[RMDB]
RNA sequence: GGGAACGACUCGAGUAGAGUCGAAAAAAUGGGUUUAACUGCAGCAUUGUAAGAAAAGGCAGGCAGUACUCUUAGACUACAGGGGUGGAUCUCAUCAUUUGAUUUUCCCGACUCCGCCAGGAAAUAAGAGGGGCCUUGGCUUGGGGAGAGGUGUGUAACUAAUUAAUGAGUUCGCUCAUUAAUUAGUAAAAGAAACAACAACAACAAC
Reactivity to 2A3 in 0.01 (KOAc 150mM, MgCl2 10mM, bicine 150mM(pH8.5), 24C), signal-to-noise 4, nucleotides 027 to 156: a000a000u170g000g010g010u090u120u050a070a010c010u010g030c010a030g040c020a060u180u060g050u250a140a100g040a100a190a050a020g040g010c030a030g040g040c010a010g030u060a080c000u010c000u030u050a030g020a090c050u070a050c160a060g010g000g020g060u040g020g030a040u030c030u000c060a110u010c030a070u080u060u210g070a050u030u080u060u060c010c050c020g040a040c030u030c030c000g050c020c020a020g050g010a050a120a090u170a080a050g020a030g000g020g040g000c030c010u040u070g020g000c020u010u080g010g000g050g010a040g010a010g000g030u060g000u010g000u050a030
Reactivity to DMS in 0.01 (KOAc 150mM, MgCl2 10mM, bicine 150mM(pH8.5), 24C), signal-to-noise 1, nucleotides 027 to 156: a080a060u000g020g030g010u000u000u000a050a070c020u010g000c020a250g040c020a090u010u010g000u010a050a140g020a070a060a040a060g030g000c020a070g020g030c030a080g000u000a060c020u000c020u000u010a080g000a110c050u010a100c050a090g000g030g020g030u000g010g000a060u000c040u000c040a050u000c060a120u000u000u020g010a220u000u000u000u000c010c000c030g000a080c040u000c040c030g000c010c010a160g010g000a020a050a120u000a080a050g000a110g000g010g020g000c040c000u000u000g010g010c030u000u000g010g060g030g000a040g000a030g040g000u040g010u000g020u010a100